[RMDB]
RNA sequence: GGGAACGACUCGAGUAGAGUCGAAAAGGGGCAGUACCCGACGCCUCCACCAAAACUUUCUAAAUAACUUGCUCCUAAAGGUAAUUUGUACGUCGAUCCGGUACUCGAAUCCUCACGUACUAAGUGAAGGUGAUCACAACUUCGGUUGUGAUCACUUAAAAGAAACAACAACAACAAC
Reactivity to 2A3 in 0.01 (KOAc 150mM, MgCl2 10mM, bicine 150mM(pH8.5), 24C), signal-to-noise 4, nucleotides 027 to 126: g010g000g010g010c070a020g040u050a070c010c000c000g010a010c020g020c010c000u000c000c040a050c000c010a030a070a070a110c060u090u090u040c040u110a080a090a080u130a030a070c030u020u090g000c000u010c030c030u120a150a080a010g070g010u050a040a140u030u060u080g040u040a030c000g000u000c050g030a020u030c020c030g020g030u050a090c050u010c070g050a050a030u020c010c010u030c000a000c020g020u030a040c040u070a050a040g040u030g140a050
Reactivity to DMS in 0.01 (KOAc 150mM, MgCl2 10mM, bicine 150mM(pH8.5), 24C), signal-to-noise 3, nucleotides 027 to 126: g000g000g000g000c100a100g000u010a110c030c020c030g020a120c060g030c050c000u000c010c040a240c010c020a060a030a080a090c210u000u010u020c130u010a050a100a080u020a090a090c070u040u010g010c010u000c010c020u020a050a100a130g000g000u050a030a110u010u020u020g060u000a020c080g030u020c170g000a050u000c070c040g000g010u030a040c030u000c010g000a060a150u000c050c060u000c080a050c010g020u000a060c110u000a080a030g020u000g000a200